[RMDB]
RNA sequence: GGGAACGACUCGAGUAGAGUCGAAAAGUAAUAGAUAACUGGAUGCAGCGUAGGCGUCAACGCAUAUCCAGUACGAAUGGUACCUGUAAAUAAAAUAUGGCGCCUAGUACAAGUACCAACAGAAGGAUAAGCGAUGGUGAUGUCAAUCACAGUUGCAUAAUUAGCCCGUAUUCGUACGGGCUAAUUAAAAAGAAACAACAACAACAAC
Reactivity to 2A3 in 0.01 (KOAc 150mM, MgCl2 10mM, bicine 150mM(pH8.5), 24C), signal-to-noise 2, nucleotides 027 to 156: g020u030a000a140u090a100g120a120u100a120a080c000u000g010g000a020u060g190c160a070g010c190g000u010a020g000g000c000g010u010c010a000a010c000g000c000a010u020a030u120c010c000a000g010u010a000c010g090a030a080u080g000g020u020a010c010c030u030g000u050a020a210a150u130a030a040a110a060u180a090u020g000g000c000g000c000c000u000a000g000u020a000c000a020a000g010u010a000c030c000a060a010c020a050g150a140a020g050g060a100u140a220a000g010c050g040a030u070g050g020u040g000a030u060g040u190c090a060a040u020c010a030c030a040g000u020u020g010c040a030
Reactivity to DMS in 0.01 (KOAc 150mM, MgCl2 10mM, bicine 150mM(pH8.5), 24C), signal-to-noise 2, nucleotides 027 to 156: g000u000a060a120u000a120g000a170u030a150a050c010u000g030g010a060u000g010c120a090g010c010g030u000a150g010g020c010g030u000c010a050a010c020g010c000a130u000a060u000c010c000a000g000u010a080c060g000a080a150u010g030g040u000a000c010c000u000g030u010a040a110a150u030a050a120a120a240u020a160u030g000g050c030g010c010c000u030a090g010u000a070c020a020a020g010u000a000c040c030a050a190c070a080g000a070a060g030g010a110u000a050a070g000c030g000a070u000g030g000u020g040a030u000g000u000c230a090a060u020c040a010c040a100g000u000u000g000c030a160